[RMDB]
RNA sequence: GGGAACGACUCGAGUAGAGUCGAAAACGUACGUGGAGACACGUACGACGAGACUUCGGUCUCGAAUCGGGCGGAGAAUAGGCGCCCUCGUGUUAGGAGUCGGUUGUCGGCGAGCCAACGGACUCAAGAGCUAACACGAUAUAUUAGGCCUGUUCGGGCUUGACUAGAAAUUCGUUUCUAGUCAAGCAAAAGAAACAACAACAACAAC
Reactivity to 2A3 in 0.01 (KOAc 150mM, MgCl2 10mM, bicine 150mM(pH8.5), 24C), signal-to-noise 2, nucleotides 027 to 156: c020g010u000a000c000g000u000g000g000a030g000a030c010a010c020g020u020a000c000g000a030c000g010a000g020a020c010u070u100c190g080g000u040c010u010c010g010a040a100u120c050g000g000g000c000g020g050a120g000a050a000u010a010g010g020c000g030c020c000c010u000c000g000u000g000u010u020a000g010g020a010g010u010c070g080g000u060u000g010u010c030g000g120c180g020a030g000c000c010a000a000c020g090g000a000c000u000c000a050a020g100a040g110c000u000a000a000c010a000c000g000a000u010a010u000a010u020u140a060g010g090c000c000u000g000u000u010c000g000g000
Reactivity to DMS in 0.01 (KOAc 150mM, MgCl2 10mM, bicine 150mM(pH8.5), 24C), signal-to-noise 2, nucleotides 027 to 156: c020g010u000a000c000g050u000g000g010a300g000a290c000a000c010g020u000a000c010g010a130c050g020a170g000a030c000u000u000c150g090g020u000c000u010c010g020a020a020u010c010g010g040g020c030g000g000a200g030a010a010u010a010g000g010c000g000c040c010c020u000c030g030u000g020u000u000a020g010g000a070g010u000c000g020g070u000u000g040u000c030g000g000c140g030a270g010c230c010a030a070c000g000g000a020c020u010c000a060a080g010a250g040c020u000a010a020c010a020c000g000a040u020a090u000a120u010u020a070g010g010c010c000u000g010u000u000c010g010g000
Background:
The record gives the reactivity of an RNA of 207 nucleotides to 2A3 and DMS. For 2A3 the reverse transcriptase was SuperScript II with manganese. For DMS the reverse transcriptase was MarathonRT. Reactivities are given for positions 27 through 156.